[RMDB]
RNA sequence: GGGAACGACUCGAGUAGAGUCGAAAAGAUAUGGAUCCGAACUCCGAUAAGACCUCUCGGAAACGAGAGGUCUUUUGACGGAGGUAGGAUCCUAAGUCAAACAUCUCAAUGUUCGCAUUGAGAUGAAUCCAAUUUGUUACUUCGGUAACAAAUUGGAAAAAGAAACAACAACAACAAC
Reactivity to DMS in 0.01 (KOAc 150mM, MgCl2 10mM, bicine 150mM(pH8.5), 24C), signal-to-noise 3, nucleotides 027 to 126: g020a040u000a300u010g000g000a000u000c000c000g000a110a300c000u000c000c010g000a100u000a010a010g000a020c010c000u000c000u010c000g000g000a080a100a160c000g030a010g020a010g020g010u000c000u000u000u000u000g010a300c100g000g000a010g020g010u000a180g000g010a000u000c000c000u000a010a070g020u000c020a150a110a260c000a010u000c000u000c000a010a010u010g000u000u020c290g010c000a020u000u000g000a030g010a000u000g010a030a080